[RMDB]
RNA sequence: GGGAACGACUCGAGUAGAGUCGAAAAAAAAAGAUAUGGAUCAGCAACAGCAUGUAAGGUACUUUGAUCACGGAUCGGAAACGAUCCGUGGGAGUACUAUCAUGACAUGCUGAUCCUAAGUCAAAAAUCAUUAUCUUUUCUUCGGAAAAGAUAAUGAAAAAGAAACAACAACAACAAC
Reactivity to 2A3 in 0.01 (KOAc 150mM, MgCl2 10mM, bicine 150mM(pH8.5), 24C), signal-to-noise 2, nucleotides 027 to 126: a070a050a000a050a000g060a040u100a050u110g000g000a000u000c000a000g000c010a010a100c040a260g090c010a020u000g010u130a300a300g080g000u010a010c010u150u210u180g140a130u240c000a010c010g040g000a000u000c010g010g000a100a120a010c010g000a010u010c020c010g000u010g000g010g000a010g000u000a000c010u020a040u140c010a010u000g120a090c010a040u080g000c000u000g000a000u000c010c000u000a020a010g040u000c030a100a030a020a010a150
Reactivity to DMS in 0.01 (KOAc 150mM, MgCl2 10mM, bicine 150mM(pH8.5), 24C), signal-to-noise 3, nucleotides 027 to 126: a040a070a090a090a050g010a050u000a300u000g000g010a000u010c010a020g000c010a030a070c260a190g000c000a010u000g010u020a130a220g000g000u010a000c000u000u000u000g000a120u020c000a000c010g000g000a000u000c000g030g010a150a070a160c010g020a000u000c000c000g030u010g000g000g000a000g010u010a000c000u000a300u000c020a000u000g020a060c110a140u000g000c000u000g000a000u010c000c000u000a030a090g000u030c050a040a090a070a090a110